[RMDB]
RNA sequence: GGGAACGACUCGAGUAGAGUCGAAAACUGAGCAGCCAUUUACUCCAGGCCGAUCAGAUGACAUCGCUGACCUGCCCGCUAUGACCAUGCAUGCUGCGACAAAGCUGCAAGAACAGCUGCGCCAGGAGGUAAUCCUCAUUUUCGAAUGAGGAUUACCAAAAGAAACAACAACAACAAC
Reactivity to DMS in 0.01 (KOAc 150mM, MgCl2 10mM, bicine 150mM(pH8.5), 24C), signal-to-noise 4, nucleotides 027 to 126: c040u000g010a130g000c030a060g000c030c050a140u010u010u000a100c080u000c110c070a090g000g020c010c030g000a040u010c020a030g010a070u000g020a120c150a070u000c100g020c050u000g000a070c040c010u000g000c040c010c040g020c100u000a050u010g010a080c120c070a090u000g000c020a060u000g000c020u010g000c080g010a110c160a050a130a030g010c000u000g000c030a050a100g010a110a100c080a060g000c020u010g000c130g020c110c040a040g000g000a130
Reactivity to 2A3 in 0.01 (KOAc 150mM, MgCl2 10mM, bicine 150mM(pH8.5), 24C), signal-to-noise 3, nucleotides 027 to 126: c020u020g020a010g030c020a010g010c030c020a070u130u130u140a080c030u030c040c030a050g030g000c000c020g020a020u040c030a010g040a120u080g070a070c050a090u100c090g010c050u030g010a060c000c000u020g030c000c020c020g000c030u080a090u140g040a050c030c020a010u040g000c010a020u140g000c020u030g020c020g070a050c050a000a120a000g010c000u020g000c040a080a010g030a070a050c040a010g010c000u030g000c020g040c040c020a050g040g030a040
Source: RMDB library OK2TST, as collected in RNAgym. An RNA of 177 nucleotides, treated with DMS and 2A3 and read out base by base. The reactions ran in a buffer of 150 mM KOAc, 10 mM MgCl2 and 150 mM bicine (pH 8.5), at 24 C. For 2A3, 5,659 sequencing reads were counted.